[RMDB]
RNA sequence: GGGAACGACUCGAGUAGAGUCGAAAAACUACACUAGCGCUAGUGUGCAUCGCUAGGCGCUAGACGCAGGAUCUGAUCCUCAGUACAGCCAUGUACUAGGCAGUAGCCAUGGUAUCACUAGUCGUCACCUACAAGUGCUGUUCGCAGCACUUGUAGGAAAAGAAACAACAACAACAAC
Reactivity to 2A3 in 0.01 (KOAc 150mM, MgCl2 10mM, bicine 150mM(pH8.5), 24C), signal-to-noise 2, nucleotides 027 to 126: a000c030u070a030c090a020c010u000a010g000c000g040c020u000a000g000u050g040u150g150c070a120u240c040g000c000u010a040g180g000c000g000c000u000a000g030a000c020g070c050a030g030g040a040u040c030u090g020a100u140c010c010u040c140a000g000u010a040c000a030g060c130c040a130u110g000u040a000c000u000a030g030g000c000a020g030u080a050g000c030c000a120u040g040g050u100a080u130c020a030c090u050a040g050u050c020g040u020c010a050
Reactivity to DMS in 0.01 (KOAc 150mM, MgCl2 10mM, bicine 150mM(pH8.5), 24C), signal-to-noise 2, nucleotides 027 to 126: a100c040u000a030c090a250c020u000a000g010c000g010c000u010a000g010u000g010u020g010c300a090u020c040g020c010u000a010g010g000c000g000c000u000a000g000a070c140g010c100a020g000g000a090u000c070u000g000a110u030c010c000u000c160a010g010u000a020c030a060g000c140c160a070u000g010u010a020c020u000a090g000g010c140a050g000u000a050g020c080c020a060u000g010g000u000a040u000c040a080c090u000a090g000u000c040g000u010c150a200